[RMDB]
Chemical mapping of a 207-nucleotide RNA with DMS and 2A3. The RNA was probed in 150 mM KOAc, 10 mM MgCl2 and 150 mM bicine (pH 8.5) at 24 C. Reactivities are given for positions 27 through 156. The DMS profile rests on 9,509 reads. For 2A3, 6,079 sequencing reads were counted.
RNA sequence: GGGAACGACUCGAGUAGAGUCGAAAACUGCUGAAAGCAAUUGCCGAUGGCCUCAACGUCAAUAUCGGCGAGCUUCGCAAGAUGGCGAACGAAGGCCAGUUGACAGCUGAUGUCCUGGUGGACGCCUUGAGCAAUGCGGCGGCCGGCGUGAACGAUCCUGUGUAAAGCUAUUCGUAGCUUUACACAGAAAAGAAACAACAACAACAAC
Reactivity to DMS in 0.01 (KOAc 150mM, MgCl2 10mM, bicine 150mM(pH8.5), 24C), signal-to-noise 4, nucleotides 027 to 156: c040u010g020c010u000g010a170a100a100g020c040a130a090u010u010g030c020c000g010a080u000g000g000c030c010u010c120a090a130c010g020u000c020a090a190u010a090u000c020g020g010c010g010a090g030c080u010u010c040g000c000a080a120g010a120u000g020g010c090g000a110a070c040g000a140a090g010g010c010c020a090g060u000u000g010a060c030a080g020c080u010g010a140u000g010u000c020c020u010g010g020u000g010g000a120c020g000c010c030u010u000g020a160g000c040a090a120u000g000c110g010g020c020g020g040c040c020g000g010c050g020u010g010a090a160c050g010a200u000c050
Reactivity to 2A3 in 0.01 (KOAc 150mM, MgCl2 10mM, bicine 150mM(pH8.5), 24C), signal-to-noise 1, nucleotides 027 to 156: c030u030g000c030u070g090a120a050a030g010c040a040a240u140u120g010c010c010g040a040u060g030g000c030c040u120c090a110a070c080g010u020c030a090a120u060a050u210c030g000g010c000g000a030g070c020u070u050c010g000c020a020a030g080a130u110g040g000c010g020a070a050c030g040a130a040g110g000c010c010a020g010u040u090g040a050c020a020g020c050u160g090a150u100g050u020c010c000u080g030g070u100g070g020a010c020g010c010c000u050u090g070a050g020c000a040a100u130g020c030g020g000c000g000g000c010c010g000g020c000g030u060g060a040a020c030g020a040u060c000